[RMDB]
Background:
Chemical mapping of a 177-nucleotide RNA with DMS and 2A3. For DMS the reverse transcriptase was MarathonRT. The DMS profile rests on 1,034 reads. DMS (dimethyl sulfate) methylates the pairing face of unpaired adenines and cytosines. Reactivities are given for positions 27 through 126.

RNA sequence: GGGAACGACUCGAGUAGAGUCGAAAACUCAUCAUUCUUGCAUCACAGGGACCUGUUGAACUUGUUCGCAUUAUGCGAUCUUAUGAUUAUGAGAAGUUGUUAUGGACCACUUCUCGAGUAUUGAAAGGAGAUUCAGUGUGUUCGCACACUGAAUCUCAAAAGAAACAACAACAACAAC
Reactivity to DMS in 0.01 (KOAc 150mM, MgCl2 10mM, bicine 150mM(pH8.5), 24C), signal-to-noise 1, nucleotides 027 to 126: c030u000c000a070u010c120a020u010u000c050u010u000g040c090a070u000c070a080c020a080g000g030g000a120c060c040u000g020u020u000g020a110a080c150u000u000g000u000u010c020g030c020a280u030u010a090u000g010c000g000a020u000c010u050u000a030u000g000a050u000u000a140u020g010a010g010a010a020g000u000u000g010u000u000a140u000g020g020a030c040c040a050c000u000u010c000u000c000g070a100g000u000a050u000u000g010a100a080a130g000
Reactivity to 2A3 in 0.01 (KOAc 150mM, MgCl2 10mM, bicine 150mM(pH8.5), 24C), signal-to-noise 1, nucleotides 027 to 126: c000u000c000a010u000c010a000u170u000c050u100u030g010c020a080u020c010a020c030a080g040g030g200a180c090c010u000g040u170u090g090a120a090c040u100u090g000u030u000c010g020c040a010u120u130a130u300g000c000g020a010u000c010u070u080a120u070g160a080u010u080a110u290g000a000g020a010a010g000u050u060g040u000u090a190u300g120g090a070c010c010a020c020u020u000c000u000c010g020a080g020u080a100u150u070g040a150a060a040g120